[RMDB]
RNA sequence: GGGAACGACUCGAGUAGAGUCGAAAAGACAAGUGCUUCGGCACUUGUCAAAUAAGCAAGUAGAAAUGGCCAAACUACAUGCAUCGAAAGAAAGGCGAUAAAAAACUGUCCAGUUCGCUGGACAGAACUUGAGAAUAACGUUCGCGUUAUUCUCAAGAAAAGAAACAACAACAACAAC
Reactivity to 2A3 in 0.01 (KOAc 150mM, MgCl2 10mM, bicine 150mM(pH8.5), 24C), signal-to-noise 5, nucleotides 027 to 126: g000a000c010a010a000g000u020g010c010u050u110c220g050g010c000a000c010u000u010g000u000c000a000a000a000u020a010a010g000c010a050a030g010u010a000g040a080a150a080u100g110g000c020c000a020a040a000c010u010a010c000a020u030g000c000a090u120c170g140a130a130a120g120a100a100a030g060g000c040g030a010u280a050a170a020a010a010a020c000u010g000u000c000c000a000g020u030u070c160g030c050u000g000g000a000c000a000g000a000a020
Reactivity to DMS in 0.01 (KOAc 150mM, MgCl2 10mM, bicine 150mM(pH8.5), 24C), signal-to-noise 3, nucleotides 027 to 126: g010a020c010a000a010g000u000g020c010u000u010c230g020g020c000a000c000u000u010g000u000c000a010a050a070u000a090a140g000c010a030a050g000u000a020g010a040a020a020u010g030g000c010c060a140a150a030c000u010a000c000a080u000g000c000a140u010c090g000a100a060a100g000a070a090a090g010g010c040g000a130u000a000a050a040a050a060a100c010u000g000u000c000c000a000g000u000u010c180g010c000u010g000g000a000c000a000g000a020a060
An RNA of 177 nucleotides, treated with 2A3 and DMS and read out base by base. The RNA was probed in 150 mM KOAc, 10 mM MgCl2 and 150 mM bicine (pH 8.5) at 24 C.